[RMDB]
RNA sequence: GGGAACGACUCGAGUAGAGUCGAAAAUCAAGGCUUCCGGCGAUGCGGGCGGUGGCCAGCGUUUCAACAUCGGUACCGGGAUAGAGACGUCAGACCGCCAACUGCACACCGCGGUCUCGGCUGCCGAAUGGACGAGGUAGUUCGCUACCUCGUCCAUAAAAGAAACAACAACAACAAC
Reactivity to DMS in 0.01 (KOAc 150mM, MgCl2 10mM, bicine 150mM(pH8.5), 24C), signal-to-noise 1, nucleotides 027 to 126: u010c080a170a130g010g030c070u000u000c060c040g040g040c060g000a170u000g020c010g000g010g070c300g000g000u000g020g010c010c100a230g000c020g010u010u020u000c010a050a230c300a020u000c000g000g000u030a150c090c000g010g010g010a050u000a150g000a060g000a010c030g010u020c040a070g010a080c000c010g000c000c050a000a140c040u000g000c040a000c120a060c070c040g030c140g000g010u010c020u000c050g000g010c140u000g000c030c000g000a090